[RMDB]
RNA sequence: GGGAACGACUCGAGUAGAGUCGAAAAUCAGGCAACUUCGGUUGCCUGAAAAUAAACUCGCCUAUAGCCAGGCGAGUACCAAAGGGGCUAAAGCAAUGGAAAAAACUGCCUCGUUCGCGAGGCAGAAGAACAGAAUAGUGUUCGCACUAUUCUGUUCAAAAGAAACAACAACAACAAC
Reactivity to DMS in 0.01 (KOAc 150mM, MgCl2 10mM, bicine 150mM(pH8.5), 24C), signal-to-noise 6, nucleotides 027 to 126: u000c000a000g010g000c000a000a000c000u000u020c190g030g010u000u000g000c000c000u010g000a000a000a060a060u010a100a090a160c010u000c000g010c000c000u010a110u010a130g000c170c150a130g000g010c000g000a010g020u000a020c030c020a040a070a090g010g010g010g020c200u000a040a100a100g010c100a070a070u010g010g010a000a070a080a080a070a110c000u000g000c000c000u000c000g010u000u010c150g020c000g010a000g010g000c000a000g000a020a060
Reactivity to 2A3 in 0.01 (KOAc 150mM, MgCl2 10mM, bicine 150mM(pH8.5), 24C), signal-to-noise 5, nucleotides 027 to 126: u010c000a000g000g020c000a000a010c020u040u110c220g130g000u000u000g000c010c000u000g000a000a000a000a000u070a000a040a010c000u000c000g000c010c000u120a120u110a120g080c060c030a000g000g010c000g000a000g030u010a010c000c000a020a020a020g120g020g010g010c020u090a100a040a010g070c050a070a150u180g110g050a120a050a010a030a020a060c000u010g000c000c000u010c000g000u020u060c240g000c000g040a000g000g000c000a000g000a000a000
Source: RMDB library M2PK50, as collected in RNAgym. This 177-nucleotide RNA was probed chemically with DMS and 2A3. Reactivities are given for positions 27 through 126. The reactions ran in a buffer of 150 mM KOAc, 10 mM MgCl2 and 150 mM bicine (pH 8.5), at 24 C. For DMS, 6,987 sequencing reads were counted.